Chemical mapping of a 177-nucleotide RNA with DMS and 2A3. The reactions ran in a buffer of 150 mM KOAc, 10 mM MgCl2 and 150 mM bicine (pH 8.5), at 24 C. It was measured as part of the RMDB libraries RFM100 and RFMREP. For 2A3, 1,058 sequencing reads were counted. DMS adducts were read by reverse transcription with MarathonRT.
RNA sequence: GGGAACGACUCGAGUAGAGUCGAAAACCCCCAUUCGCAUCUAACAAGGAAUCUGCGCCCCAGAGAGUCCCGGGAGCGCCGCCGGUCGGUGCCCGGCGCGCCGGGCCAUGCAGCGACGGCCGCCGCGUAAAGGUUAAAAGUUCGCUUUUAACCUUUAAAAAGAAACAACAACAACAAC
Reactivity to DMS in 0.01 (KOAc 150mM, MgCl2 10mM, bicine 150mM(pH8.5), 24C), signal-to-noise 3, nucleotides 027 to 126: c030c010c000c150c050a100u000u030c060g020c030a060u000c050u030a060a090c080a060a120g000g000a140a040u000c030u010g010c100g000c100c030c040c020a080g000a140g010a220g000u000c040c010c040g020g000g020a070g000c030g000c130c050g010c120c100g020g030u020c060g000g020u010g020c090c130c080g010g000c110g040c300g040c020c030g000g020g030c030c020a050u000g010c060a060g000c040g020a060c020g000g000c030c020g010c030c030g020c120g020
Reactivity to 2A3 in 0.01 (KOAc 150mM, MgCl2 10mM, bicine 150mM(pH8.5), 24C), signal-to-noise 1, nucleotides 027 to 126: c020c000c010c010c010a080u050u090c020g000c030a050u050c040u130a140a080c060a120a090g080g000a040a100u020c030u040g000c010g030c030c010c010c000a010g040a000g020a020g140u060c000c020c040g060g030g020a060g050c000g020c040c000g000c000c000g120g100u210c090g060g040u060g000c000c000c000g000g000c050g000c050g000c010c000g000g010g000c000c010a030u100g030c010a030g010c010g100a080c020g040g000c030c020g000c010c000g030c020g050